Structure probing data (DMS and 2A3) for a 207-nucleotide construct. The 2A3 profile rests on 2,726 reads. For 2A3 the reverse transcriptase was SuperScript II with manganese.

RNA sequence: GGGAACGACUCGAGUAGAGUCGAAAAGCAACGACAUAUAUGAGCUUAUCUGAUAAUUUUAAGACAAGUGAUGGUUUAGCUGUUAACAUCGGUACAAAAGAUGUUAAAUAUGCUAAUGUCAUCUCAUAUAUGGGAUUCAGGUUUGAAGCCAACAUACCCGAAAACGAAUUUUCGAAUUCGUUUUCGGAAAAGAAACAACAACAACAAC
Reactivity to DMS in 0.01 (KOAc 150mM, MgCl2 10mM, bicine 150mM(pH8.5), 24C), signal-to-noise 2, nucleotides 027 to 156: g020c020a100a110c050g000a120c000a000u000a020u000a000u000g020a300g020c120u000u000a010u010c030u020g020a240u020a090a150u000u000u000u000a110a030g030a040c000a070a030g030u010g010a030u000g030g040u010u010u020a000g020c000u010g020u000u000a000a030c030a010u010c000g000g040u000a260c210a120a110a090a160g000a030u000g010u000u000a000a030a070u000a040u000g010c000u000a010a030u010g010u010c000a080u020c040u000c020a010u000a030u000a010u000g000g010g000a260u000u000c020a120g010g010u000u000u040g000a130a210g030c020c000a020a120c080a140u020a120c130
Reactivity to 2A3 in 0.01 (KOAc 150mM, MgCl2 10mM, bicine 150mM(pH8.5), 24C), signal-to-noise 5, nucleotides 027 to 156: g040c060a060a030c030g140a020c010a010u020a000u000a000u010g010a000g020c010u050u060a020u040c030u030g100a090u150a300a260u100u140u070u110a040a020g020a050c060a100a040g020u020g090a020u020g090g130u040u010u010a000g000c010u000g010u030u000a000a000c000a000u000c010g100g050u270a080c050a060a130a020a010g000a000u000g000u000u000a000a040a030u160a050u110g000c000u010a020a010u040g010u010c000a020u000c010u010c010a000u000a000u000a000u010g010g000g020a020u120u110c070a040g030g050u020u060u150g110a080a010g020c010c010a020a030c020a080u060a070c000